RNA sequence: GGGAACGACUCGAGUAGAGUCGAAAAUUAAAGAGCGUAGCACACACUCAGACUAAGUCUGACACACACAUACGCUAAUCAUCUCUGUGUGUGUUCGAGAUAUCGAUAAGUGUUUGAGAUGAAAAAACACUUCUUAGUUCUUCGGAACUAAGAAGUGAAAAGAAACAACAACAACAAC
Reactivity to DMS in 0.01 (KOAc 150mM, MgCl2 10mM, bicine 150mM(pH8.5), 24C), signal-to-noise 4, nucleotides 027 to 126: u010u010a060a110a110g010a150g010c000g020u000a030g010c130a060c130a030c020a050c070u000c030a040g010a030c070u010a110a150g000u000c000u000g010a060c010a000c000a010c010a000c010a040u000a020c020g000c030u000a050a110u000c010a000u000c000u000c090u000g000u010g000u000g020u000g000u010u000c110g000a010g000a110u010a080u000c030g000a110u010a070a070g010u000g010u000u000u000g000a040g030a010u000g000a000a050a060a070a110a100
Reactivity to 2A3 in 0.01 (KOAc 150mM, MgCl2 10mM, bicine 150mM(pH8.5), 24C), signal-to-noise 3, nucleotides 027 to 126: u190u110a100a050a020g080a010g000c010g010u010a000g030c030a020c000a000c000a000c020u020c020a000g030a070c060u220a250a110g060u000c000u020g010a000c000a000c000a010c000a000c000a020u020a020c000g010c040u040a030a030u010c010a010u000c000u010c010u020g010u000g000u000g000u000g000u020u020c010g020a020g020a090u200a060u160c020g010a010u020a170a060g000u010g000u020u020u080g000a020g000a000u000g000a050a000a010a000a010a000